[RMDB]
RNA sequence: GGGAACGACUCGAGUAGAGUCGAAAAGAUAUGGAACGUACGAGAUGUCAUCGGAAACGAUGAUACAUCGAUGAGUCGUUCCUAAGUCAAAGAAAGUAAGAGCCAGUUCGCUGGCUCUUACUUUCAACUUGAGUGGAAGGUUCGCCUUCCACUCAAGAAAAGAAACAACAACAACAAC
Reactivity to DMS in 0.01 (KOAc 150mM, MgCl2 10mM, bicine 150mM(pH8.5), 24C), signal-to-noise 1, nucleotides 027 to 126: g000a130u000a160u000g000g000a080a070c120g040u010a160c040g010a120g000a100u010g010u000c000a000u000c000g030g000a110a060a150c000g000a010u000g000a070u020a020c120a080u000c000g020a120u000g000a070g000u000c000g000u000u000c000c010u000a030a060g010u000c130a040a090a150g010a030a010a010g000u000a020a000g020a000g000c010c010a010g030u000u000c170g010c000u010g010g000c010u000c000u000u000a000c000u010u010u000c010a020a060